Chemical mapping of a 177-nucleotide RNA with DMS and 2A3. It was measured as part of the RMDB library OK1LIB. The DMS profile rests on 1,792 reads. For 2A3 the reverse transcriptase was SuperScript II with manganese.
[RMDB]
RNA sequence: GGGAACGACUCGAGUAGAGUCGAAAAGCUCUAGGAGACUAGAGCGAUACGUUAGAGAGCUGGUGGCAUGACUAACGGAUAGCCAGGUACGAGGUUGCCAGAGGACAUAGCUAUAGCUAUGUCCAAAGAGCUAUGAUAGCUUCGGCUAUCAUAGCUCAAAAGAAACAACAACAACAAC
Reactivity to DMS in 0.01 (KOAc 150mM, MgCl2 10mM, bicine 150mM(pH8.5), 24C), signal-to-noise 1, nucleotides 027 to 126: g030c000u000c000u010a000g020g010a200g000a190c000u020a030g010a020g010c000g020a050u000a010c020g000u030u000a020g020a230g020a050g000c020u000g060g050u010g000g000c070a080u000g000a140c060u000a040a070c070g000g000a080u010a060g000c000c010a070g020g040u020a070c100g010a030g000g000u000u000g000c010c020a040g000a260g030g000a010c000a010u000a000g000c000u000a160u050a130g000c010u000a010u000g000u010c000c000a070a000a030
Reactivity to 2A3 in 0.01 (KOAc 150mM, MgCl2 10mM, bicine 150mM(pH8.5), 24C), signal-to-noise 1, nucleotides 027 to 126: g000c000u050c000u000a030g000g030a080g030a060c010u000a000g000a000g010c000g000a000u000a080c050g030u030u000a000g010a090g000a000g070c130u090g000g080u070g060g000c010a010u200g080a280c010u020a000a000c000g000g000a000u070a090g030c000c020a000g020g030u000a000c120g090a130g040g050u010u000g050c000c000a060g040a030g030g000a000c000a000u000a000g000c040u200a090u060a280g010c000u000a000u020g000u000c000c000a000a000a010